[RMDB]
RNA sequence: GGGAACGACUCGAGUAGAGUCGAAAAGCCACUGACUACGGUCAGUGGCAAUAAAUCACGUCAAACCGCCAAAAGAGAAAAUCUCAGACGUGAAAAGGCGGAACAGGCUAGGUACGCCUAGCCUGAAACGUCAAAAUAUCUUCGGAUAUUUUGACGUAAAAGAAACAACAACAACAAC
Reactivity to 2A3 in 0.01 (KOAc 150mM, MgCl2 10mM, bicine 150mM(pH8.5), 24C), signal-to-noise 5, nucleotides 027 to 126: g020c020c010a010c000u010g000a000c000u020a020c160g120g000u000c000a000g000u000g000g020c000a000a000u030a010a000a000u110c010a010c030g020u010c130a180a190a230c010c000g000c000c000a060a050a170a000g060a030g050a060a210a160a210u060c010u000c010a000g000a010c000g020u020g030a110a010a000a010g000g000c010g000g000a040a050c000a000g000g020c000u010a010g000g020u030a030c180g050c020c000u000a000g000c000c010u000g000a000a020
Reactivity to DMS in 0.01 (KOAc 150mM, MgCl2 10mM, bicine 150mM(pH8.5), 24C), signal-to-noise 3, nucleotides 027 to 126: g010c000c000a000c000u000g010a000c010u000a120c130g020g000u000c000a000g010u000g030g000c000a000a010u010a030a070a090u020c030a190c000g040u020c010a100a110a120c020c010g000c010c020a070a040a100a090g000a040g020a150a060a090a180u040c020u000c060a140g010a020c010g000u010g000a030a030a070a050g000g000c020g020g010a270a250c000a000g010g000c000u000a000g000g070u000a080c270g010c000c000u000a000g010c020c010u000g000a020a040

Overview
The record gives the reactivity of an RNA of 177 nucleotides to 2A3 and DMS. The data come from the RNA Mapping Database (RMDB), library OK1LIB. High 2A3 reactivity points to a flexible backbone, as in loops and unpaired stretches. The RNA was probed in 150 mM KOAc, 10 mM MgCl2 and 150 mM bicine (pH 8.5) at 24 C.